[RMDB]
RNA sequence: GGGAACGACUCGAGUAGAGUCGAAAACCCUCGUUCGCGAGGGGUGUUGCGUACUACGCUCGAGGUCGAGGAUCAUGGUGAUGCUAUUCCCAAAUAGGAAUAGCUAACCAUGGGAGACCUAAGACAGGCGUAUCGCUAAGAGGAUGUUCGCAUCCAACAGAAUACGGGUAUUCGUACCCGUAUUCUGAAAAGAAACAACAACAACAAC
Reactivity to 2A3 in 0.01 (KOAc 150mM, MgCl2 10mM, bicine 150mM(pH8.5), 24C), signal-to-noise 4, nucleotides 027 to 156: c010c020c000u000c010g030u070u050c300g000c010g150a020g000g020g010g040u060g090u080u120g030c050g030u090a140c060u000a000c030g040c030u070c100g070a060g000g000u000c010g020a230g030g010a020u010c000a000u000g000g010u020g010a080u300g000c000u000a010u010u030c030c010c000a120a290a140u300a110g010g000a000a000u000a010g000c000u000a000a010c000c000a000u000g000g000g000a010g000a000c000c010u050a100a080g120a050c110a070g070g000c020g000u000a080u300c020g000c010u020a060a020g060a090g100g000a010u010g060u100u090c190g000c070a010u000c010c000a030a000
Reactivity to DMS in 0.01 (KOAc 150mM, MgCl2 10mM, bicine 150mM(pH8.5), 24C), signal-to-noise 3, nucleotides 027 to 156: c010c000c000u000c010g030u000u000c250g000c020g010a030g090g090g070g010u010g030u020u000g010c000g000u010a120c040u000a010c010g040c020u000c070g010a040g040g010u000c010g000a120g020g020a100u010c000a010u000g020g010u010g010a300u030g000c000u000a010u000u000c010c000c010a080a180a180u000a050g010g020a040a010u000a020g000c000u000a200a010c010c000a000u010g000g000g000a080g020a010c000c000u000a070a100g000a220c300a070g000g010c000g020u000a020u000c040g020c060u000a060a130g010a190g010g020a020u000g000u000u000c230g050c040a070u010c000c000a060a300